[RMDB]
Chemical mapping of a 177-nucleotide RNA with DMS and 2A3.
The 2A3 profile rests on 632 reads.
DMS adducts were read by reverse transcription with MarathonRT.
The RNA was probed in 150 mM KOAc, 10 mM MgCl2 and 150 mM bicine (pH 8.5) at 24 C.
The data come from the RNA Mapping Database (RMDB), library OK1LIB.
RNA sequence: GGGAACGACUCGAGUAGAGUCGAAAAAUGCGUCUGGCCGGCCGCCGGUGCCAGAUGCGCUGAAACGGUUGGUGGAUACGCGCAAGAGCUGGAUGGGGAGUGUGGGCCGGGUGAUCAAGGAACGGCCGGCAUCCCGAUAGUUCGCUAUCGGGAUGCCAAAAGAAACAACAACAACAAC
Reactivity to DMS in 0.01 (KOAc 150mM, MgCl2 10mM, bicine 150mM(pH8.5), 24C), signal-to-noise 1, nucleotides 027 to 126: a190u010g000c010g010u000c000u000g000g000c000c190g000g020c080c020g060c010c000g000g030u020g000c020c020a060g000a070u000g000c000g030c010u020g000a140a150a090c220g000g040u010u000g030g010u000g010g030a160u000a010c070g020c050g020c110a150a100g000a140g000c000u000g000g030a050u010g000g000g030g000a110g030u050g000u000g010g000g020c000c000g020g000g000u010g000a110u020c170a010a070g000g000a080a080c000g000g000c060c060
Reactivity to 2A3 in 0.01 (KOAc 150mM, MgCl2 10mM, bicine 150mM(pH8.5), 24C), signal-to-noise 2, nucleotides 027 to 126: a000u220g010c010g000u010c010u020g000g030c000c000g120g000c020c030g070c050c030g020g010u070g040c000c010a000g070a180u040g000c040g030c010u100g070a130a020a000c020g090g000u150u060g000g050u020g080g060a040u050a170c090g000c010g000c070a040a000g040a040g170c120u080g010g060a130u110g010g000g000g000a040g090u070g070u110g000g020g020c000c000g010g000g000u140g070a070u180c110a160a050g060g010a120a000c070g000g000c010c000